Source: RMDB library OK1LIB, as collected in RNAgym. Chemical mapping of a 177-nucleotide RNA with DMS and 2A3.

RNA sequence: GGGAACGACUCGAGUAGAGUCGAAAAGAAGUGGCAGGGACAUGCCCCACAAGCUCGUUCUAGCAACAUAUGUUUGGCUAGUUCGAGCGAUUAGUCUUGAGGAGCGUCCUCUCGCCUAUUUACGAGAGCUAUGCAUAUGGUUCGCCAUAUGCAUAGCAAAAGAAACAACAACAACAAC
Reactivity to DMS in 0.01 (KOAc 150mM, MgCl2 10mM, bicine 150mM(pH8.5), 24C), signal-to-noise 4, nucleotides 027 to 126: g000a070a050g000u010g000g000c010a100g000g010g010a000c060a080u020g010c010c010c000c020a040c120a100a160g000c010u000c000g000u000u000c000u000a000g010c020a060a030c040a210u020a140u050g030u030u020u020g000g000c000u000a010g000u000u010c010g000a000g010c000g000a030u040u010a060g010u050c170u010u050g010a110g010g010a190g000c090g000u000c010c020u030c040u020c110g010c010c030u000a020u020u000u020a120c090g000a080g010a180
Reactivity to 2A3 in 0.01 (KOAc 150mM, MgCl2 10mM, bicine 150mM(pH8.5), 24C), signal-to-noise 8, nucleotides 027 to 126: g130a060a010g090u050g030g000c010a010g000g010g010a020c020a060u230g010c000c000c000c010a050c010a020a030g000c000u000c000g010u000u000c000u000a000g010c020a010a070c030a090u300a080u300g160u150u100u110g140g030c000u000a000g000u000u000c000g000a000g000c000g000a000u000u070a020g070u050c080u120u120g040a170g010g020a140g020c010g020u010c000c010u050c010u020c050g010c000c000u030a090u030u100u060a090c110g030a020g010a000
The RNA was probed in 150 mM KOAc, 10 mM MgCl2 and 150 mM bicine (pH 8.5) at 24 C.